Source: RMDB library OK2TRN, as collected in RNAgym.
The record gives the reactivity of an RNA of 177 nucleotides to DMS and 2A3.
2A3 adducts were read by reverse transcription with SuperScript II with manganese.
DMS adducts were read by reverse transcription with MarathonRT.
The RNA was probed in 150 mM KOAc, 10 mM MgCl2 and 150 mM bicine (pH 8.5) at 24 C.

[RMDB]
RNA sequence: GGGAACGACUCGAGUAGAGUCGAAAACUUCUUGAUCCACUUGAGAGUGCUUACGCUGAUGUGCGAUUCUUUGAUGUAGACGCCGAGCAAACACGUCAUCAGUACGACGACGUUCUCAAUGACGUUAGGCGUAAAAUUUAUUCGUAAAUUUUACGCCAAAAGAAACAACAACAACAAC
Reactivity to DMS in 0.01 (KOAc 150mM, MgCl2 10mM, bicine 150mM(pH8.5), 24C), signal-to-noise 5, nucleotides 027 to 126: c200u000u000c070u010u000g030a110u000c020c020a050c050u010u000g000a060g000a080g000u000g010c040u000u000a160c140g010c020u010g010a060u020g000u000g050c040g000a120u000u000c040u000u010u020g000a090u020g020u010a070g000a060c040g020c020c010g000a090g010c100a090a070a080c260a040c020g000u000c000a010u000c110a060g020u000a060c090g010a120c170g000a090c020g000u000u000c000u010c020a160a060u000g000a070c080g000u000u000a100
Reactivity to 2A3 in 0.01 (KOAc 150mM, MgCl2 10mM, bicine 150mM(pH8.5), 24C), signal-to-noise 4, nucleotides 027 to 126: c030u070u060c030u080u140g050a060u040c000c020a050c040u020u030g020a010g000a010g050u050g020c040u120u110a060c080g000c000u050g050a170u050g140u080g020c000g080a110u060u020c000u080u070u140g140a190u190g040u090a030g030a070c050g000c030c010g020a020g030c030a040a090a000c060a020c050g010u010c000a030u000c000a010g040u060a020c050g060a040c080g020a030c030g050u040u000c010u000c010a030a050u050g010a010c010g040u060u140a100